[RMDB]
RNA sequence: GGGAACGACUCGAGUAGAGUCGAAAAAAUAUGCUCGACAGGCUCCCUGUCCGACAGAGCUUUUAGAUCUUCUGAUCUUUCCCUGCAGCAUAUCGCUUAUGCAUCAAGCGAUUGUCGGAUCACACAAUGGUAAGAUAACGUUCGCGUUAUCUUACCAAAAAGAAACAACAACAACAAC
Reactivity to DMS in 0.01 (KOAc 150mM, MgCl2 10mM, bicine 150mM(pH8.5), 24C), signal-to-noise 4, nucleotides 027 to 126: a080a050u000a030u000g000c030u010c070g030a120c140a080g000g000c110u000c060c030c020u000g020u000c000c010g000a020c030a090g010a080g010c100u000u000u010u000a010g000a020u000c010u000u010c230u010g010a000u000c000u000u000u000c020c000c000u010g030c120a100g020c060a040u000a030u000c020g010c020u000u010a050u010g000c190a110u000c140a040a010g000c000g000a010u000u000g000u000c020g010g010a060u010c150a070c140a050c160a070a130
Reactivity to 2A3 in 0.01 (KOAc 150mM, MgCl2 10mM, bicine 150mM(pH8.5), 24C), signal-to-noise 1, nucleotides 027 to 126: a000a000u150a020u050g010c050u050c060g050a000c020a040g030g050c000u030c000c020c000u000g020u000c000c000g000a000c000a010g060a010g040c130u040u060u060u040a000g020a000u000c000u200u000c170u300g000a010u020c000u020u010u000c010c010c050u060g040c060a010g000c000a030u020a030u190c020g010c040u010u060a060u200g170c090a090u180c080a030a000g000c010g050a060u030u030g020u000c020g050g020a100u110c050a060c020a040c020a090a210
Chemical mapping of a 177-nucleotide RNA with DMS and 2A3.
Reactivities are given for positions 27 through 126.
The reactions ran in a buffer of 150 mM KOAc, 10 mM MgCl2 and 150 mM bicine (pH 8.5), at 24 C.
For 2A3 the reverse transcriptase was SuperScript II with manganese.
The DMS profile rests on 4,152 reads.